[RMDB]
RNA sequence: GGGAACGACUCGAGUAGAGUCGAAAAACUCAGUCAUCUUAGGCAGUUUCCAAACUGCUGCUGCAGGCCACAACCCAAACAGCUGCUGAGUAUCUGCACAACUCUGUGCUUGGGACCCAAGGCCCUGACUAUGUUUGAGCUUCGGCUCAAACAUAGUAAAAGAAACAACAACAACAAC
Reactivity to DMS in 0.01 (KOAc 150mM, MgCl2 10mM, bicine 150mM(pH8.5), 24C), signal-to-noise 2, nucleotides 027 to 126: a070c020u000c020a030g000u020c030a050u010c200u000u000a150g020g020c010a000g000u000u000u010c270c220a040a120a040c000u000g000c020u000g030c050u000g000c080a140g040g000c030c060a110c270a180a110c160c010c040a010a090a120c030a040g010c010u000g020c030u000g010a030g010u000a020u000c060u010g010c040a010c030a070a100c150u000c200u000g030u010g000c020u000u010g030g030g020a060c050c020c070a150a100g030g000c030c030c050u000g070
Reactivity to 2A3 in 0.01 (KOAc 150mM, MgCl2 10mM, bicine 150mM(pH8.5), 24C), signal-to-noise 2, nucleotides 027 to 126: a000c000u020c020a000g070u090c020a120u020c120u140u200a030g010g000c030a000g010u000u040u110c050c050a140a150a010c010u000g010c000u000g000c010u010g030c020a060g040g070c050c040a040c020a090a060c000c000c000a080a040a000c020a030g050c000u050g000c010u010g010a020g020u010a090u000c040u100g020c000a020c020a060a180c080u100c090u210g010u020g020c000u050u090g040g030g000a080c020c010c000a040a050g060g020c000c020c000u020g010

Chemical mapping of a 177-nucleotide RNA with DMS and 2A3. Values are in units of 0.01, from 0 to 300, in steps of 10. Source: RMDB library OK2TST, as collected in RNAgym. The reactions ran in a buffer of 150 mM KOAc, 10 mM MgCl2 and 150 mM bicine (pH 8.5), at 24 C.